Chemical mapping of a 177-nucleotide RNA with DMS.
The DMS profile rests on 3,281 reads.
The reactions ran in a buffer of 150 mM KOAc, 10 mM MgCl2 and 150 mM bicine (pH 8.5), at 24 C.
RNA sequence: GGGAACGACUCGAGUAGAGUCGAAAAGAUAUGGAUUCCUGAGGUGACCGUGGUCUAGCAACAGCCAUAGGUCGGAAACGACCUGAUGGACAUGCUAGACCACGGUCACCUCUGGAAUCCUAAGUCACUUAUGGAUAUUGUUCGCAAUAUCCAUAAGAAAAGAAACAACAACAACAAC
Reactivity to DMS in 0.01 (KOAc 150mM, MgCl2 10mM, bicine 150mM(pH8.5), 24C), signal-to-noise 1, nucleotides 027 to 126: g020a050u010a300u000g020g000a010u000u000c000c010u020g010a020g000g070u000g000a020c010c020g070u010g010g030u000c000u000a010g030c000a050a090c270a190g000c000c000a010u000a060g000g030u000c010g000g000a070a110a280c000g020a010c000c020u000g010a020u010g000g010a060c130a110u010g000c000u000a010g010a000c000c000a000c000g000g000u000c020a000c000c020u020c000u000g000g000a010a000u000c000c010u000a010a080g010u010c030a190